[RMDB]
RNA sequence: GGGAACGACUCGAGUAGAGUCGAAAAAUAAAGAGCGUAAACGCGUCAAUGAGUGACGUGAAGAUCAUCCAAGUGUGCUGUCUACAGUCGUAGAUAGCGCACAUUACGCUAAGAUGAUCAUAAAAAACUGCGAGUGAUAGUUCGCUAUCACUCGCAGAAAAGAAACAACAACAACAAC
Reactivity to 2A3 in 0.01 (KOAc 150mM, MgCl2 10mM, bicine 150mM(pH8.5), 24C), signal-to-noise 2, nucleotides 027 to 126: a040u280a020a090a030g050a010g000c000g010u010a020a080a030c030g000c000g010u000c000a040a190u270g130a060g300u070g000a010c010g000u000g070a110a030g000a020u000c000a010u010c030c050a090a110g010u010g010u010g010c020u000g030u000c000u000a040c050a200g110u240c230g020u110a000g000a010u000a010g010c010g000c000a010c010a000u040u030a010c000g000c010u000a000a060g010a020u010g000a010u010c030a070u160a010a110a000a000a010a000
Reactivity to DMS in 0.01 (KOAc 150mM, MgCl2 10mM, bicine 150mM(pH8.5), 24C), signal-to-noise 1, nucleotides 027 to 126: a090u020a030a030a000g020a040g000c020g060u000a030a090a190c040g000c000g000u000c000a050a160u050g030a140g030u020g020a010c000g020u000g020a100a120g020a000u000c000a000u000c010c080a070a060g010u000g000u010g000c000u000g000u000c020u000a000c000a140g000u020c290g010u000a000g020a020u000a000g000c030g010c000a000c000a020u000u010a000c010g010c000u010a090a120g000a060u030g000a030u020c010a070u020a020a100a090a080a060a060